[RMDB]
Chemical mapping of a 207-nucleotide RNA with DMS and 2A3.
Reactivities are given for positions 27 through 156.
The RNA was probed in 150 mM KOAc, 10 mM MgCl2 and 150 mM bicine (pH 8.5) at 24 C.
For DMS, 3,512 sequencing reads were counted.
RNA sequence: GGGAACGACUCGAGUAGAGUCGAAAAGGGGUCUCCUUGGAGGAACAACAGCCUAUUGGGAGCUCUGAAGCCUCCACGGAGCGAAGAACAAUAGGACAUGUUCUGGAAGAGGAGACGGAGGCACCCAAACAGGUUGAGAGUUCGCUCUCAACCUGAAUCAUCAUAAUAUGUUCGCAUAUUAUGAUGAAAAAGAAACAACAACAACAAC
Reactivity to DMS in 0.01 (KOAc 150mM, MgCl2 10mM, bicine 150mM(pH8.5), 24C), signal-to-noise 2, nucleotides 027 to 156: g020g030g020g030u010c010u020c040c020u000u000g060g030a300g000g050a010a050c000a100a120c100a180g000c020c000u010a060u000u020g000g020g020a170g000c010u000c000u000g000a090a170g030c020c000u010c000c030a300c060g000g010a040g020c000g030a100a200g010a100a150c020a040a050u000a010g020g010a050c040a180u010g010u000u000c020u030g010g010a300a270g000a070g010g030a030g010a070c010g000g020a030g000g000c050a060c020c000c010a110a110a230c000a010g000g020u000u010g010a010g000a030g030u000u010c300g010c020u010c000u000c010a000a010c000c000u000g000a050a150
Reactivity to 2A3 in 0.01 (KOAc 150mM, MgCl2 10mM, bicine 150mM(pH8.5), 24C), signal-to-noise 4, nucleotides 027 to 156: g060g010g010g000u000c010u010c000c010u010u020g040g040a090g030g000a030a020c070a040a050c050a240g050c010c000u000a010u000u020g000g000g020a020g000c000u000c000u010g010a050a030g020c000c010u010c000c010a040c030g010g020a000g000c010g100a130a030g010a020a000c000a000a010u010a000g020g040a020c040a130u240g000u000u010c010u010g050g080a040a020g000a010g010g000a010g000a000c000g000g000a000g000g000c020a030c010c010c010a030a110a010c010a000g020g000u000u010g000a000g000a010g000u090u180c270g060c110u000c000u000c000a010a000c000c000u000g000a000a050